[RMDB]
RNA sequence: GGGAACGACUCGAGUAGAGUCGAAAAGGGGUCCGUGACAUGACUUCGAAGACGCAACAGCCAUACUGAAGCCUCCACGGUAUGGACAUGCGUUGUAUGAAGUCAACAGCACGGACGGAGGCACCCAAAUCCGGGCAUGCUUCGGCAUGCCCGGAAACAUCCUAUUAAGUUUCGACUUAAUAGGAUGAAAAGAAACAACAACAACAAC
Reactivity to DMS in 0.01 (KOAc 150mM, MgCl2 10mM, bicine 150mM(pH8.5), 24C), signal-to-noise 1, nucleotides 027 to 156: g080g000g030g020u000c000c020g020u000g020a140c080a300u020g050a060c000u000u000c000g020a160a300g020a030c000g000c010a070a130c090a260g010c000c030a020u000a020c040u000g020a030a160g000c050c010u000c000c010a300c050g020g010u010a020u020g000g000a030c040a190u000g010c000g020u000u000g000u000a160u040g000a060a000g000u000c010a050a110c050a140g010c000a000c010g000g000a050c010g000g020a000g070g040c050a090c010c010c010a050a070a100u000c010c000g000g010g000c000a010u050g000c000u000u020c300g050g000c000a030u000g000c050c000c000g010g000a000a010a090
Reactivity to 2A3 in 0.01 (KOAc 150mM, MgCl2 10mM, bicine 150mM(pH8.5), 24C), signal-to-noise 2, nucleotides 027 to 156: g000g040g050g000u000c000c010g020u020g030a090c120a260u300g000a000c010u010u000c020g140a160a060g010a020c020g010c020a180a170c020a180g030c010c010a000u010a000c000u040g030a130a030g030c010c000u010c010c000a010c010g010g000u010a000u010g000g010a030c020a110u200g000c010g020u000u020g010u060a090u300g010a000a000g000u010c000a020a010c000a000g040c000a000c000g010g000a000c000g000g000a010g010g000c010a050c000c000c000a060a080a010u030c000c010g000g070g000c000a000u000g040c020u090u110c210g070g000c020a000u010g000c000c000c010g000g050a000a000a000